The data come from the RNA Mapping Database (RMDB), library OK1LIB.
This 177-nucleotide RNA was probed chemically with 2A3.
[RMDB]
RNA sequence: GGGAACGACUCGAGUAGAGUCGAAAAUAAACAAAGGCUGACAAAAUCCUAUCUCUACCUCCUCGUGGUGUCAGCCGGUAUGUGCAGUAUCAGUACUGCAUAUACCAACAGAGAUAGGCAAAAACAAGCGACAGAAGCUGUUCGCAGCUUCUGUCGCAAAAGAAACAACAACAACAAC
Reactivity to 2A3 in 0.01 (KOAc 150mM, MgCl2 10mM, bicine 150mM(pH8.5), 24C), signal-to-noise 1, nucleotides 027 to 126: u040a010a150a020c090a090a010a000g000g000c000u000g000a000c080a090a040a030a130u140c000c000u000a000u000c000u000c000u000a000c040c000u000c010c090u170c060g010u140g000g000u020g000u000c000a000g000c000c000g020g000u000a000u000g000u000g000c000a000g000u000a100u140c130a220g120u050a000c000u000g000c010a000u000a000u000a000c000c000a010a000c060a000g000a000g000a000u030a000g030g000c020a040a090a000a010a000c100a090a000

The RNA was probed in 150 mM KOAc, 10 mM MgCl2 and 150 mM bicine (pH 8.5) at 24 C. For 2A3 the reverse transcriptase was SuperScript II with manganese.